The record gives the reactivity of an RNA of 177 nucleotides to DMS. Source: RMDB library OK2TST, as collected in RNAgym. Values cover nucleotides 27 to 126. DMS adducts were read by reverse transcription with MarathonRT.

RNA sequence: GGGAACGACUCGAGUAGAGUCGAAAAUUUUCUGUGGUUGAAAAUAUUUGUGCUUUUUCACCAUUUUUUCCUGCAGACAUUGCAAUCCUGGGAAUGGACAUUGAUGUGCAAACCAUAGAGGACAAUGAUACUAUGCCGAAUUCGUUCGGCAUAGUAUAAAAGAAACAACAACAACAAC
Reactivity to DMS in 0.01 (KOAc 150mM, MgCl2 10mM, bicine 150mM(pH8.5), 24C), signal-to-noise 3, nucleotides 027 to 126: u000u020u010u000c090u010g020u010g000g010u010u030g000a020a030a030a030u010a070u010u020u010g010u010g020c300u010u000u000u020u000c030a030c010c080a010u000u010u010u000u000u000c010c020u000g010c080a090g000a110c110a020u000u000g010c060a070a110u000c030c040u000g010g010g000a090a210u010g000g000a050c040a170u010u000g010a100u000g020u000g010c020a020a050a280c030c010a020u000a050g010a030g030g010a100c050a010a020u000g000